Chemical mapping of a 177-nucleotide RNA with 2A3 and DMS. Values are in units of 0.01, from 0 to 300, in steps of 10. As a SHAPE reagent, 2A3 marks flexible, mostly unpaired nucleotides at the ribose 2'-OH. The reactions ran in a buffer of 150 mM KOAc, 10 mM MgCl2 and 150 mM bicine (pH 8.5), at 24 C.
[RMDB]
RNA sequence: GGGAACGACUCGAGUAGAGUCGAAAACUUAACGCGUUCGCGCGUUAAGAAACAACAUAAUCAUCGAGUUGACGAUGACACAAAUACCGUCAGUGUAGACGGAAAGCAUUCGCUUCGGCGAAUGCAACAUGACUUUACGGUUCGCCGUAAAGUCAUGAAAAGAAACAACAACAACAAC
Reactivity to 2A3 in 0.01 (KOAc 150mM, MgCl2 10mM, bicine 150mM(pH8.5), 24C), signal-to-noise 4, nucleotides 027 to 126: c000u000u010a000a000c000g000c000g030u030u060c190g010c000g000c010g100u000u000a000a000g000a010a070a010c050a010a010c020a100u250a180a060u080c020a000u000c000g010a060g180u110u090g210a130c020g000a020u000g020a000c010a000c020a090a140a010u180a140c000c000g000u000c000a060g150u070g180u300a050g030a000c000g010g000a070a060a000g000c000a000u000u000c010g020c030u040u100c230g100g010c000g000a000a000u000g000c000a010a000
Reactivity to DMS in 0.01 (KOAc 150mM, MgCl2 10mM, bicine 150mM(pH8.5), 24C), signal-to-noise 4, nucleotides 027 to 126: c000u000u000a000a000c010g020c010g030u000u000c250g030c000g010c020g010u000u000a000a000g000a110a110a080c110a100a040c090a070u010a090a160u000c000a000u000c010g000a200g010u000u020g010a160c000g010a020u010g000a030c230a070c120a060a080a080u000a090c000c010g000u000c000a140g000u020g010u010a090g000a010c010g000g000a060a070a080g000c020a020u000u000c000g010c010u000u020c190g030g010c000g030a000a010u000g010c000a060a070